[RMDB]
RNA sequence: GGGAACGACUCGAGUAGAGUCGAAAAUUUCUAAGCAUGGCUUCUCUCUACAUAUUUGGUGCACCCUUCAGUGAUUACAAAGAUACUCCAAGGUCCUGCCAUGAUACUGAACAAAAUUCAGAUGUAGCCGAUUACUGCUGUUCGCAGCAGUAAUCGGAAAAGAAACAACAACAACAAC
Reactivity to 2A3 in 0.01 (KOAc 150mM, MgCl2 10mM, bicine 150mM(pH8.5), 24C), signal-to-noise 1, nucleotides 027 to 126: u120u240u000c040u040a020a030g030c000a060u130g020g020c000u030u040c000u040c000u000c030u050a030c060a130u110a140u100u110u180g060g060u000g010c000a000c000c000c000u000u060c040a050g010u000g160a060u130u060a000c000a020a190a080g080a040u000a070c040u030c000c000a020a020g070g000u040c070c020u050g010c010c000a000u030g090a060u120a100c000u000g010a030a000c000a150a090a010a020u110u110c090a000g080a160u060g130u030a000g100
Chemical mapping of a 177-nucleotide RNA with 2A3. The reactions ran in a buffer of 150 mM KOAc, 10 mM MgCl2 and 150 mM bicine (pH 8.5), at 24 C.